[RMDB]
RNA sequence: GGGAACGACUCGAGUAGAGUCGAAAACCGUGGACGCCCUGCACAUCCCGGGCGACUCCCGGUUAGGCUGGCGCCGUGCGCCCUUCCCCCGGGGGAUCGCUCCUGGGUGUCCGGGGAGCCGCAUAGCCCAAUCGAAAACGUUCGCGUUUUCGAUUGGAAAAGAAACAACAACAACAAC
Reactivity to DMS in 0.01 (KOAc 150mM, MgCl2 10mM, bicine 150mM(pH8.5), 24C), signal-to-noise 2, nucleotides 027 to 126: c070c010g050u000g010g010a060c060g000c030c010c000u010g000c300a020c000a080u000c070c000c280g020g010g030c020g000a000c000u000c000c000c000g000g000u030u050a080g000g030c300u000g000g000c020g070c020c180g000u060g000c030g020c020c000c120u050u000c010c000c240c000c010g010g000g000g000g000a100u000c060g010c040u070c000c030u050g010g000g010u000g010u000c230c000g000g000g010g030a090g000c050c000g080c070a090u020a070g000c070
Reactivity to 2A3 in 0.01 (KOAc 150mM, MgCl2 10mM, bicine 150mM(pH8.5), 24C), signal-to-noise 3, nucleotides 027 to 126: c010c000g000u020g000g010a070c060g080c020c000c000u020g000c040a020c000a030u020c010c020c020g000g000g000c000g010a010c020u020c000c010c000g010g000u030u100a050g020g000c040u020g000g000c020g000c050c130g070u170g010c040g000c020c010c040u060u120c000c010c010c000c010g000g000g010g000g010a210u010c010g000c020u150c020c000u000g000g000g000u000g000u010c070c000g000g000g000g000a010g030c020c000g040c040a070u130a060g000c000